Annotation
Conditions: 150 mM KOAc, 10 mM MgCl2 and 150 mM bicine (pH 8.5), 24 C. Chemical mapping of a 177-nucleotide RNA with DMS and 2A3. For DMS, 787 sequencing reads were counted.
RNA sequence: GGGAACGACUCGAGUAGAGUCGAAAACAAACUAACUUCGGUUAGUUUGAAAGAACGCUGCAACGCGCAGAGCUCUCGCGAGAGCGCGAAUGCACAAAGAAAAAAGAUAAUCGUUCGCGAUUAUCAACAUUAGACCUGGGUUCGCCCAGGUCUAAUGAAAAGAAACAACAACAACAAC
Reactivity to DMS in 0.01 (KOAc 150mM, MgCl2 10mM, bicine 150mM(pH8.5), 24C), signal-to-noise 2, nucleotides 027 to 126: c000a020a040a010c000u000a000a000c010u000u010c220g020g000u000u000a000g010u000u010u000g010a030a110a140g000a200a060c240g000c170u000g030c050a050a270c020g000c020g010c030a090g000a260g000c010u000c080u000c280g000c230g020a090g000a050g010c010g010c000g000a060a070u010g010c040a010c090a060a040a150g010a000a060a040a110a100a120g000a000u000a000a000u010c000g020u000u000c240g030c000g000a010u000u010a000u000c000a090a140
Reactivity to 2A3 in 0.01 (KOAc 150mM, MgCl2 10mM, bicine 150mM(pH8.5), 24C), signal-to-noise 1, nucleotides 027 to 126: c000a000a010a020c000u000a000a000c010u020u030c090g060g000u010u010a010g000u030u000u000g000a010a040a040g060a130a010c050g020c190u020g000c000a000a000c010g000c020g000c060a030g030a100g100c000u020c020u040c190g050c060g060a030g010a000g050c000g030c000g050a090a080u090g000c020a010c050a040a160a030g250a020a160a000a000a000a000g010a000u000a000a000u020c000g000u000u050c300g000c000g090a000u000u030a020u020c010a000a010